Chemical mapping of a 177-nucleotide RNA with 2A3 and DMS.
Conditions: 150 mM KOAc, 10 mM MgCl2 and 150 mM bicine (pH 8.5), 24 C.
It was measured as part of the RMDB library OK1LIB.
RNA sequence: GGGAACGACUCGAGUAGAGUCGAAAAUAUCGAAGUCGGCGCUAUUGAAUACCCGUGUAUGGCGUUGCUGAGAGGGACAUGCACUGCCAUGUCGGGCGGUGUAUCAAGCCCUAGCGUGGGCUAGAAAAGUCUCAGGUCGAUUCGUCGAUCUGGGGCUAAAAGAAACAACAACAACAAC
Reactivity to 2A3 in 0.01 (KOAc 150mM, MgCl2 10mM, bicine 150mM(pH8.5), 24C), signal-to-noise 7, nucleotides 027 to 126: u150a020u020c020g010a030a000g030u020c010g040g000c000g000c000u020a020u040u100g070a050a030u050a070c000c000c000g030u050g030u040a050u040g020g000c020g010u010u040g000c010u030g030a030g010a010g040g020g030a010c010a010u020g000c010a000c010u010g000c000c000a060u100g080u120c010g010g010g000c000g000g000u020g000u000a020u020c010a020a010g000c000c000c000u000a000g000c000g030u080g010g000g000c000u010a020g050a010a070a000
Reactivity to DMS in 0.01 (KOAc 150mM, MgCl2 10mM, bicine 150mM(pH8.5), 24C), signal-to-noise 9, nucleotides 027 to 126: u030a080u010c040g000a110a050g010u010c030g010g000c010g010c020u000a040u020u020g010a130a090u020a100c030c030c020g020u030g020u020a050u010g010g010c070g010u000u000g000c040u000g000a140g000a060g000g000g010a070c130a050u000g000c010a010c010u000g000c000c000a090u030g010u050c220g010g000g010c000g010g000u000g010u000a010u010c100a100a090g000c000c000c010u000a040g010c100g020u010g000g000g000c020u000a070g000a070a080a090